[RMDB]
RNA sequence: GGGAACGACUCGAGUAGAGUCGAAAAAGCUCUGGGAGCCGUGCACGAUCGGCGAGUUCGCCGGCCGCGAGGGCGAUUGGCAGACCGCCGACUUGCCCCGCCCUCGGUUCGCUGAUCAGCGACAGAUCAUGGGUGCCACCGCCACCGCGAUCCAGCACUACUCUCUAUUGUUCGCAAUAGAGAGUAGAAAAGAAACAACAACAACAAC
Reactivity to 2A3 in 0.01 (KOAc 150mM, MgCl2 10mM, bicine 150mM(pH8.5), 24C), signal-to-noise 4, nucleotides 027 to 156: a000g040c030u020c030u070g040g010g030a010g040c030c010g050u070g010c030a030c140g040a120u010c020g010g000c040g000a020g050u170u290c060g000c030c010g030g030c040c040g030c040g050a270g010g020g010c010g020a050u030u150g020g000c050a060g060a240c070c040g010c000c010g030a020c050u040u060g000c000c000c000c000g010c000c020c000u060c020g040g000u090u030c010g000c010u010g000a040u070c070a010g030c040g070a050c020a040g050a040u080c050a120u170g100g000g000u040g040c020c020a050c040c020g030c040c000a020c000c020g050c010g030a070u040c020c010a010g010c040a000
Reactivity to DMS in 0.01 (KOAc 150mM, MgCl2 10mM, bicine 150mM(pH8.5), 24C), signal-to-noise 2, nucleotides 027 to 156: a060g000c040u000c040u020g010g020g050a100g070c040c030g000u010g030c030a130c030g000a020u000c030g020g000c000g050a130g020u020u010c150g010c040c000g010g040c010c040g010c060g030a100g000g020g020c000g010a050u020u000g010g010c050a130g020a190c200c130g010c040c040g030a010c040u000u000g070c020c010c070c010g010c020c000c000u000c040g020g000u010u000c010g010c040u010g000a110u010c080a170g000c000g000a300c040a060g020a030u010c020a080u010g030g040g030u010g010c040c040a120c140c050g030c010c010a040c050c060g010c090g000a050u000c000c030a120g000c100a300
An RNA of 207 nucleotides, treated with 2A3 and DMS and read out base by base.
Source: RMDB library OK3TST, as collected in RNAgym.
2A3 adducts were read by reverse transcription with SuperScript II with manganese.
Values are in units of 0.01, from 0 to 300, in steps of 10.
Conditions: 150 mM KOAc, 10 mM MgCl2 and 150 mM bicine (pH 8.5), 24 C.